[RMDB]
RNA sequence: GGGAACGACUCGAGUAGAGUCGAAAACAUAAACGCUUCGGCGUUUAUGAAAUAAAAUCAGCGGUAAGCUCGCGUAAAAUAUUACCGCUGAUCGCGAGCUUAAAACGGGACAGUUCGCUGUCCCGAAGAUUACGCUCAAGUUCGCUUGAGCGUAAUCAAAAGAAACAACAACAACAAC
Reactivity to DMS in 0.01 (KOAc 150mM, MgCl2 10mM, bicine 150mM(pH8.5), 24C), signal-to-noise 2, nucleotides 027 to 126: c000a000u000a000a000a000c000g010c000u000u000c160g040g020c000g010u000u000u000a010u000g000a080a090a040u000a040a060a080a050u000c020a030g020c020g010g010u000a010a030g000c040u000c110g050c160g000u000a050a050a050a060u000a070u010u000a100c000c000g020c060u010g000a010u000c040g010c070g000a070g000c050u010u000a000a080a120a100c010g010g000g000a010c000a000g010u000u000c220g010c010u000g000u000c000c000c010g020a010a020
Reactivity to 2A3 in 0.01 (KOAc 150mM, MgCl2 10mM, bicine 150mM(pH8.5), 24C), signal-to-noise 2, nucleotides 027 to 126: c010a010u010a000a000a000c000g030c000u020u060c180g140g010c010g000u010u000u000a010u010g000a010a000a000u160a000a070a010a040u080c030a010g020c020g090g040u040a010a010g000c040u010c050g030c030g070u030a000a080a030a080u190a070u060u050a040c000c020g030c030u010g010a000u000c000g000c020g010a060g020c010u080u180a060a000a040a070c000g000g000g000a000c000a020g010u040u050c160g070c080u000g020u000c000c000c000g000a000a000

This 177-nucleotide RNA was probed chemically with DMS and 2A3.
The reactions ran in a buffer of 150 mM KOAc, 10 mM MgCl2 and 150 mM bicine (pH 8.5), at 24 C.
For 2A3 the reverse transcriptase was SuperScript II with manganese.
For DMS the reverse transcriptase was MarathonRT.
For 2A3, 2,382 sequencing reads were counted.